[RMDB]
An RNA of 177 nucleotides, treated with 2A3 and DMS and read out base by base. For 2A3, 2,489 sequencing reads were counted. For 2A3 the reverse transcriptase was SuperScript II with manganese. The reactions ran in a buffer of 150 mM KOAc, 10 mM MgCl2 and 150 mM bicine (pH 8.5), at 24 C. The DMS profile rests on 2,093 reads.
RNA sequence: GGGAACGACUCGAGUAGAGUCGAAAAUUUAGGUACUUAUGGACAACAGAGGAUAGAUGGCGAACCAGCAGAGACUCGAGUAUUGGGUAGAGUCUUACCUUACUAUCUUCCAGACUCUAAGGAUCCAGUACCUUUAGUUCUUCGGAACUAAAGGUACAAAAGAAACAACAACAACAAC
Reactivity to 2A3 in 0.01 (KOAc 150mM, MgCl2 10mM, bicine 150mM(pH8.5), 24C), signal-to-noise 3, nucleotides 027 to 126: u100u080u090a080g010g030u030a020c000u030u050a060u200g040g000a030c030a110a010c010a090g020a010g040g000a000u000a000g030a050u050g010g000c050g000a080a070c010c030a050g050c050a010g000a010g000a090c000u000c030g030a040g070u160a230u260u200g100g020g010u040a030g010a000g000u010c000u000u010a020c000c010u030u050a110c010u030a020u000c020u020u000c020c000a050g020a100c010u010c020u060a020a040g030g010a050u060c010c030a000
Reactivity to DMS in 0.01 (KOAc 150mM, MgCl2 10mM, bicine 150mM(pH8.5), 24C), signal-to-noise 3, nucleotides 027 to 126: u000u000u010a060g010g010u000a050c030u000u010a030u010g020g010a030c060a120a150c220a100g000a020g010g010a040u000a020g010a120u000g020g000c130g000a060a100c110c070a050g000c080a100g000a050g000a010c000u000c000g010a200g020u010a130u010u000g000g000g010u000a110g000a040g000u000c010u010u000a050c060c010u010u010a090c030u000a040u000c020u000u000c000c020a200g010a160c100u000c070u000a030a070g000g000a160u000c030c010a160